The record gives the reactivity of an RNA of 177 nucleotides to 2A3 and DMS. The 2A3 profile rests on 7,588 reads. Conditions: 150 mM KOAc, 10 mM MgCl2 and 150 mM bicine (pH 8.5), 24 C. 2A3 adducts were read by reverse transcription with SuperScript II with manganese.
[RMDB]
RNA sequence: GGGAACGACUCGAGUAGAGUCGAAAAGAAAGAAAGAAUCGUGCCUGGCUCCCUGUAUGCCACAAGAAAACAUCGAUUUAGUUUCAAAAUCGAUCACUAGUGGCGUACAGAGUAGUCAAGCAUGAAACUCAGACCAACAUUUCGAUGUUGGUCUGAGAAAAGAAACAACAACAACAAC
Reactivity to 2A3 in 0.01 (KOAc 150mM, MgCl2 10mM, bicine 150mM(pH8.5), 24C), signal-to-noise 6, nucleotides 027 to 126: g120a020a080a010g140a030a110a010g080a030a100u050c010g000u010g000c000c000u010g000g000c000u010c020c010c000u000g000u000a000u000g000c010c000a000c020a040a030g120a080a120a020a020c080a020u000c010g020a040u010u010u040a190g150u100u200u240c080a030a030a000a000u000c000g010a000u010c020a020c060u040a040g010u000g000g000c000g000u000a000c000a000g010a010g000u010a000g000u000c000a000a000g000c000a000u000g000a000a010a000
Reactivity to DMS in 0.01 (KOAc 150mM, MgCl2 10mM, bicine 150mM(pH8.5), 24C), signal-to-noise 2, nucleotides 027 to 126: g000a110a100a140g010a130a040a170g030a070a140u000c000g000u000g000c000c000u010g020g000c000u000c040c010c000u000g020u020a000u000g040c010c000a000c020a050a010g000a090a040a180a300c240a050u000c000g000a000u000u000u000a210g000u040u010u000c300a030a000a010a000u000c000g000a020u000c210a040c000u000a040g000u010g010g000c040g000u000a000c000a000g000a030g040u010a000g010u000c000a000a050g000c000a000u000g000a030a000a060